Notes
This 177-nucleotide RNA was probed chemically with DMS and 2A3. For 2A3 the reverse transcriptase was SuperScript II with manganese. Values cover nucleotides 27 to 126.
RNA sequence: GGGAACGACUCGAGUAGAGUCGAAAAGUCCCCACUUUCGAGUGGGGACAAUCAAAGUUUUGGCACUCGCAGCCCGCAGCGUUGGUGCUCCCACGCGGUGCUUAACUGCCUACUUCGGUAGGCAGAAAGAUACGGGUAGGUUCGCCUACCCGUAUCUAAAAGAAACAACAACAACAAC
Reactivity to DMS in 0.01 (KOAc 150mM, MgCl2 10mM, bicine 150mM(pH8.5), 24C), signal-to-noise 1, nucleotides 027 to 126: g000u000c000c000c010c000a000c000u000u010u030c100g020a010g070u000g000g000g020g000a000c000a000a050u010c130a080a120a170g010u010u000u010u010g000g000c000a000c030u010c040g040c030a100g020c040c000c020g010c150a040g000c100g040u010u010g010g000u000g000c040u000c010c020c070a110c090g010c040g000g010u000g000c020u000u000a050a110c000u000g020c000c000u000a010c010u000u010c140g030g000u010a000g010g000c010a000g000a030a080
Reactivity to 2A3 in 0.01 (KOAc 150mM, MgCl2 10mM, bicine 150mM(pH8.5), 24C), signal-to-noise 1, nucleotides 027 to 126: g030u000c000c000c010c000a000c000u160u120u130c250g130a010g000u010g000g020g000g000a000c020a000a000u080c050a000a030a100g070u000u090u230u190g000g030c010a010c020u110c050g040c020a040g050c020c040c010g000c060a120g070c040g090u160u130g040g060u150g030c020u070c020c010c000a030c000g030c030g030g020u030g000c000u090u050a120a050c000u000g040c010c000u000a010c000u040u060c110g130g010u000a000g000g000c000a010g000a020a040